[RMDB]
RNA sequence: GGGAACGACUCGAGUAGAGUCGAAAAGAUUAAGUGGGAGCGUCGCCCUUUCGGUGCAUCGGAUAUUAAUUAGCCAGUGCGUGGCAAUACGCAUAUUGAUGUCUACUUUGGCGUAGACUUUGCCAAUUUAAGGAUUGGUGGGCAAUCCAGCCCUAGAAUCCUAGUACCCAUUCGUGGGUACUAGGAUAAAAGAAACAACAACAACAAC
Reactivity to 2A3 in 0.01 (KOAc 150mM, MgCl2 10mM, bicine 150mM(pH8.5), 24C), signal-to-noise 3, nucleotides 027 to 156: g030a020u070u140a140a030g090u130g010g010g010a060g020c000g030u000c030g050c000c000c020u000u040u070c090g010g010u050g010c000a040u080c070g020g010a010u020a020u170u160a190a100u080u100a080g010c010c010a040g020u000g010c010g010u020g000g060c080a050a080u190a040c020g010c040a000u070a090u040u130g070a080u100g010u000c000u010a030c020u070u100u200g120g000c020g000u000a010g010a020c000u060u060u040g000c010c000a020a020u030u060u130a130a060g080g010a020u010u020g000g010u040g010g020g000c000a000a030u030c020c040a030g000c020c000c000u030a080g090a050
Reactivity to DMS in 0.01 (KOAc 150mM, MgCl2 10mM, bicine 150mM(pH8.5), 24C), signal-to-noise 2, nucleotides 027 to 156: g010a160u010u000a060a120g030u020g000g000g000a030g040c060g050u010c040g020c040c030c040u000u000u020c070g040g000u010g040c040a070u000c040g020g010a070u000a080u000u000a050a130u010u000a080g030c020c010a040g000u000g000c010g040u000g020g000c090a060a140u000a030c020g000c020a050u000a090u000u000g020a090u000g010u010c020u000a020c010u000u010u000g000g020c100g000u000a070g000a040c010u010u000u000g010c010c030a010a050u000u000u010a110a150g020g010a090u000u010g020g030u000g030g020g030c020a120a100u000c080c070a140g000c020c010c010u000a080g000a110